[RMDB]
RNA sequence: GGGAACGACUCGAGUAGAGUCGAAAAUGCAGCCGUGCUACGGUUCUUAUGCGUAUCCUACCAACACAAACGGUGGGCAGGUGAAAACCAGCGCGACCGAUGCUACUGGGGCAAAUAACGUUACCCUAAAUUUUUUUAACAACGCGGCAGAUAACGGGAGUCUAAUUGUUUUCGAACAAUUAGACUCAAAAGAAACAACAACAACAAC
Reactivity to 2A3 in 0.01 (KOAc 150mM, MgCl2 10mM, bicine 150mM(pH8.5), 24C), signal-to-noise 4, nucleotides 027 to 156: u100g020c030a020g060c010c010g040u030g000c030u110a100c020g030g030u060u040c050u090u300a150u130g020c010g040u090a130u120c000c000u000a020c020c000a080a050c050a050c060a250a180a040c070g000g000u040g000g000g000c040a070g020g010u050g030a020a010a010a070c010c010a010g010c000g010c010g020a000c000c030g010a040u060g000c020u040a060c110u110g000g010g010g050c050a050a080a080u160a080a010c050g050u050u080a120c000c000c000u040a060a070a030u100u070u030u010u010u020u160a060a070c070a050a030c060g020c020g110g000c040a030g040a110u080a040a020c040g080g030
Reactivity to DMS in 0.01 (KOAc 150mM, MgCl2 10mM, bicine 150mM(pH8.5), 24C), signal-to-noise 2, nucleotides 027 to 156: u000g020c100a110g010c020c010g060u000g020c030u000a130c080g010g010u010u000c040u000u000a050u030g030c050g030u020a120u030c020c010u010a010c000c020a080a110c030a300c110a100a000a110c170g020g020u000g010g010g040c100a050g070g030u000g000a120a040a050a100c020c030a220g010c030g000c000g020a070c020c060g000a100u010g010c070u000a060c050u010g030g000g010g080c010a050a050a100u000a070a140c090g000u000u000a040c000c020c000u020a020a060a010u000u000u000u000u000u000u000a030a200c050a120a060c030g000c020g000g020c020a080g000a100u010a030a020c060g000g020